The data come from the RNA Mapping Database (RMDB), library TTRDEL. Chemical mapping of a 177-nucleotide RNA with DMS and 2A3. For DMS, 1,337 sequencing reads were counted. The reactions ran in a buffer of 150 mM KOAc, 10 mM MgCl2 and 150 mM bicine (pH 8.5), at 24 C. The 2A3 profile rests on 1,766 reads. 2A3 adducts were read by reverse transcription with SuperScript II with manganese.

[RMDB]
RNA sequence: GGGAACGACUCGAGUAGAGUCGAAAAGAUAUGGAUCUGUACACUUCUUGGAUUUAUCGGAAACGAUUGUCAGAAGGGUACUGGAUCCUAAGUCAAAGUAAUUAGCUGGUUCGCCAGCUAAUUACAAUCCUCCCUCCUAGUUCGCUAGGAGGGAGGAAAAAGAAACAACAACAACAAC
Reactivity to DMS in 0.01 (KOAc 150mM, MgCl2 10mM, bicine 150mM(pH8.5), 24C), signal-to-noise 1, nucleotides 027 to 126: g000a010u000a300u000g000g000a000u000c000u000g000u000a000c020a030c000u010u020c000u020u020g030g030a000u000u010u000a000u000c000g010g000a120a060a170c000g000a010u000u000g010u000c010a030g000a000a010g010g000g000u000a000c000u020g030g010a000u000c000c000u010a030a080g000u010c020a100a070a210g000u000a010a000u000u000a000g000c000u000g000g000u000u010c230g000c000c000a000g010c000u000a000a000u000u000a000c000a100a120
Reactivity to 2A3 in 0.01 (KOAc 150mM, MgCl2 10mM, bicine 150mM(pH8.5), 24C), signal-to-noise 1, nucleotides 027 to 126: g030a000u010a020u120g000g000a020u000c010u020g020u010a000c040a010c000u030u000c020u100u230g200g030a080u300u240u230a020u060c000g060g010a070a060a040c020g020a030u000u010g010u000c010a010g000a020a010g000g020g000u050a010c020u020g020g020a000u000c000c000u010a100a000g040u030c060a260a010a020g000u020a000a000u020u000a010g030c000u000g010g040u060u140c300g050c090c000a000g010c000u000a000a000u000u000a000c000a020a000